[RMDB]
RNA sequence: GGGAACGACUCGAGUAGAGUCGAAAAGAUCAGGCGGUGGGCAAGGUGGCGCGCAAGACGCUGCUUCCCGGCAAGCCGAUCCUCGUUUCGGCACUGGGCGAGCCGUCUCUGGUCACGCGCGGCAUUACAGUAUCCUAAUGUUCGCAUUAGGAUACUGAAAAGAAACAACAACAACAAC
Reactivity to DMS in 0.01 (KOAc 150mM, MgCl2 10mM, bicine 150mM(pH8.5), 24C), signal-to-noise 9, nucleotides 027 to 126: g010a060u010c040a060g010g010c030g010g020u010g010g010g020c240a090a070g010g040u000g010g010c010g020c030g010c160a120a100g000a070c010g010c090u000g000c020u000u000c010c000c000g000g010c130a120a110g010c010c000g000a010u010c110c150u000c200g000u000u000u000c010g010g020c000a140c020u000g000g000g010c160g010a080g000c010c010g000u000c040u010c070u000g010g000u000c060a100c100g010c040g020c030g000g000c050a060u010u000a120
Reactivity to 2A3 in 0.01 (KOAc 150mM, MgCl2 10mM, bicine 150mM(pH8.5), 24C), signal-to-noise 6, nucleotides 027 to 126: g020a040u060c030a020g020g010c020g040g040u080g020g040g010c050a070a040g050g000u020g010g020c010g000c000g010c050a060a030g060a050c010g010c030u030g000c000u040u030c000c000c010g000g020c080a100a030g000c000c000g010a020u030c010c040u120c090g110u030u060u020c000g010g010c010a010c040u020g010g030g010c050g060a010g000c000c010g060u010c040u000c010u040g050g020u050c030a020c050g050c000g000c010g060g000c030a030u050u170a070